[RMDB]
RNA sequence: GGGAACGACUCGAGUAGAGUCGAAAAGAAGACGUGACGAAAAGUCACGAAAAGAGCUGGUAGGUACCACCAGCAAAGAAAAGGUACCAAGACGGAAACGUCAGACAUCGGAGACGAUGUCAAAAGAGUGCCACUACGUGUUCGCACGUAGUGGCACAAAAGAAACAACAACAACAAC
Reactivity to 2A3 in 0.01 (KOAc 150mM, MgCl2 10mM, bicine 150mM(pH8.5), 24C), signal-to-noise 1, nucleotides 027 to 126: g300a120a020g090a030c020g000u000g000a000c040g110a140a110a050a040g000u000c000a000c000g000a000a000a000a000g020a050g000c010u020g000g040u000a080g030g000u000a000c000c000a000c000c000a040g010c170a080a050a000g080a000a050a000a010g010g000u030a000c000c000a000a080g020a010c000g040g000a000a160a000c020g000u000c030a000g000a000c000a000u000c000g070g000a020g030a050c000g020a000u000g000u000c000a000a000a000a000g080a020

Source information: Structure probing data (2A3) for a 177-nucleotide construct. Conditions: 150 mM KOAc, 10 mM MgCl2 and 150 mM bicine (pH 8.5), 24 C. The 2A3 profile rests on 1,042 reads. The data come from the RNA Mapping Database (RMDB), library OK1LIB.